The record gives the reactivity of an RNA of 207 nucleotides to 2A3. The data come from the RNA Mapping Database (RMDB), library OK3TST. Conditions: 150 mM KOAc, 10 mM MgCl2 and 150 mM bicine (pH 8.5), 24 C.

RNA sequence: GGGAACGACUCGAGUAGAGUCGAAAACUUUGCUUGAACGGGAGGUACACCAGGACUUCAUGUCCCGCUUUCCUUAAACCUGAAGGGUUCAAAGCUCUCAAAAACAGCAAAAGUACCGAUGCGUUCAAACUGCACACGGAUACUAUUCUCAAGUGAGACUAACAUCCGCAUUCGUGCGGAUGUUAGUAAAAGAAACAACAACAACAAC
Reactivity to 2A3 in 0.01 (KOAc 150mM, MgCl2 10mM, bicine 150mM(pH8.5), 24C), signal-to-noise 1, nucleotides 027 to 156: c000u000u000u100g000c000u020u000g080a090a020c050g000g060g000a030g000g040u030a060c010a040c120c090a070g000g000a000c010u090u070c300a130u300g020u000c060c030c030g000c010u010u040u040c030c000u060u090a110a060a080c010c020u050g220a110a070g070g030g090u030u050c070a020a010a040g000c000u010c000u020c050a050a080a040a020a100c020a050g010c010a050a050a010a050g010u030a050c000c010g000a070u030g030c000g030u050u090c000a090a110a000c050u090g000c020a050c000a010c020g000g000a080u120a000c050u070a070u140u060c040u020c030a060a210g090u110g100a090g070